[RMDB]
RNA sequence: GGGAACGACUCGAGUAGAGUCGAAAACAAGCAGGAAUCAGUGCUGCGAUGAACUUAUGAGUGAAUGCAUCAAAAAGACCAAGUUGAACUUAUGAGCGAAUGCAUCAAAAAGACCAAGACUUGAUCCCUUGCCCACAAAGAUACAAGGCUGAGGACAUCCCGUCAUAAUCUUCGGAUUAUGACGGGAAAAAGAAACAACAACAACAAC
Reactivity to DMS in 0.01 (KOAc 150mM, MgCl2 10mM, bicine 150mM(pH8.5), 24C), signal-to-noise 1, nucleotides 027 to 156: c020a080a080g030c020a040g030g000a100a060u000c040a130g000u000g020c000u010g050c070g000a080u030g030a130a050c000u000u030a080u020g020a050g070u000g030a170a110u000g000c050a190u020c060a050a100a050a070a090g000a090c060c050a050a210g010u010u030g020a110a080c010u000u000a020u000g000a060g000c090g030a230a120u030g010c010a040u020c030a000a040a120a050a010g020a110c030c080a060a100g040a040c040u000u000g000a080u000c030c000c000u030u000g030c060c010c070a060c080a060a030a090g030a180u000a160c030a050a020g000g040c090u030g000a070g000g060a100c050a130
Reactivity to 2A3 in 0.01 (KOAc 150mM, MgCl2 10mM, bicine 150mM(pH8.5), 24C), signal-to-noise 2, nucleotides 027 to 156: c040a030a030g010c000a010g040g050a080a130u050c000a050g020u020g070c020u020g000c080g090a180u090g060a010a050c010u050u090a060u100g040a040g010u020g040a140a020u060g040c010a010u020c090a070a070a020a050a020g030a050c060c020a000a040g030u030u010g130a030a010c010u070u010a030u100g030a000g000c040g060a110a020u040g000c000a010u000c010a020a070a070a010a000g040a010c030c040a030a030g090a100c020u030u040g010a060u030c020c000c040u040u120g010c000c000c020a050c030a020a120a000g100a060u140a140c010a010a010g120g000c050u050g050a050g050g000a010c000a080
The record gives the reactivity of an RNA of 207 nucleotides to DMS and 2A3. The data come from the RNA Mapping Database (RMDB), library OK3TST. The 2A3 profile rests on 729 reads. The reactions ran in a buffer of 150 mM KOAc, 10 mM MgCl2 and 150 mM bicine (pH 8.5), at 24 C. High DMS reactivity at an A or C suggests that its Watson-Crick edge is free.